The record gives the reactivity of an RNA of 177 nucleotides to DMS and 2A3. DMS adducts were read by reverse transcription with MarathonRT.

[RMDB]
RNA sequence: GGGAACGACUCGAGUAGAGUCGAAAAGAGAACUGGAAGCUUCUCCUCGCCUUCUUGUGCCCAUACUUCUUCCGUUCCACCAUCCUCGGGUCACGGGUGAGGAACUUGUUCGCCCGGAGGACCGGUGCAAUCUACAGUGGUUCGCCACUGUAGAUUGAAAAGAAACAACAACAACAAC
Reactivity to DMS in 0.01 (KOAc 150mM, MgCl2 10mM, bicine 150mM(pH8.5), 24C), signal-to-noise 6, nucleotides 027 to 126: g010a120g010a070a060c050u000g010g020a080a080g010c290u000u000c060u000c000c020u010c070g010c060c030u000u000c040u000u010g020u000g010c020c010c020a110u010a080c140u000u000c030u000u000c040c030g020u000u000c060c000a070c050c020a280u000c010c010u000c020g010g000g010u000c230a060c050g000g000g010u000g000a100g000g010a110a030c080u010u000g000u000u000c150g000c000c010c000g000g010a060g000g000a030c110c090g010g010u000g000
Reactivity to 2A3 in 0.01 (KOAc 150mM, MgCl2 10mM, bicine 150mM(pH8.5), 24C), signal-to-noise 4, nucleotides 027 to 126: g060a010g010a030a030c070u110g030g080a070a010g060c020u090u030c010u050c040c030u020c010g050c010c000u070u100c010u050u110g050u090g060c000c010c000a070u100a100c040u060u100c000u110u030c040c020g050u110u000c020c010a010c010c010a030u020c000c010u020c030g010g000g020u030c030a010c030g030g000g000u010g010a060g080g040a020a010c010u010u070g040u090u050c030g030c000c000c040g000g030a050g010g000a010c030c070g020g000u020g020
Notes: The reactions ran in a buffer of 150 mM KOAc, 10 mM MgCl2 and 150 mM bicine (pH 8.5), at 24 C. Source: RMDB library OK2TRN, as collected in RNAgym.